The data come from the RNA Mapping Database (RMDB), library OK3TST. This 207-nucleotide RNA was probed chemically with 2A3 and DMS. For 2A3, 690 sequencing reads were counted. 2A3 is a SHAPE reagent: it acylates the 2'-hydroxyl of flexible nucleotides of all four kinds. 2A3 adducts were read by reverse transcription with SuperScript II with manganese. The RNA was probed in 150 mM KOAc, 10 mM MgCl2 and 150 mM bicine (pH 8.5) at 24 C. The DMS profile rests on 7,090 reads.

[RMDB]
RNA sequence: GGGAACGACUCGAGUAGAGUCGAAAAUAGGCGAACGAGAGGCCCUCUCGUGUGCGGAGUUGUCACGCUGACAGAAUUGUUAUGAUGUCCGAUUCCGGUAGCAUCGCGGCGAUGUUUUCAUAGGACAUCUUAUGAACCCAAGUGCUUCGGGGAAGCAAUUAUUAGCGGAUUUCGAUCCGCUAAUAAUAAAAGAAACAACAACAACAAC
Reactivity to 2A3 in 0.01 (KOAc 150mM, MgCl2 10mM, bicine 150mM(pH8.5), 24C), signal-to-noise 2, nucleotides 027 to 156: u190a040g040g060c000g040a070a030c020g000a020g020a020g120g160c080c120c020u050c000u000c000g070u080g040u050g010c040g010g020a100g020u060u070g030u070c050a030c090g050c070u100g030a060c010a020g120a110a120u080u060g120u010u050a080u100g030a010u000g000u000c000c020g020a100u210u100c060c040g070g030u080a010g010c010a010u060c020g000c130g130g090c100g010a000u010g010u000u120u020u060c100a110u090a040g000g000a000c000a000u000c030u000u050a080u070g040a000a040c020c010c030a080a010g090u030g030c020u080u040c020g000g000g040g040a000a000g020c060a050
Reactivity to DMS in 0.01 (KOAc 150mM, MgCl2 10mM, bicine 150mM(pH8.5), 24C), signal-to-noise 3, nucleotides 027 to 156: u000a090g010g010c020g030a050a020c000g020a080g010a110g030g020c050c080c030u010c020u000c010g000u000g020u020g030c020g020g010a180g000u010u000g010u010c040a150c090g030c070u060g010a130c050a090g010a070a180u000u000g020u000u000a080u000g000a070u000g010u020c020c010g000a180u010u000c110c050g020g020u000a060g000c020a010u000c010g020c050g030g000c130g000a050u000g010u010u000u000u000c070a130u000a150g000g010a050c020a010u000c000u010u000a060u000g000a070a120c050c020c040a070a140g010u000g000c040u000u000c030g030g000g030g000a110a040g010c030a120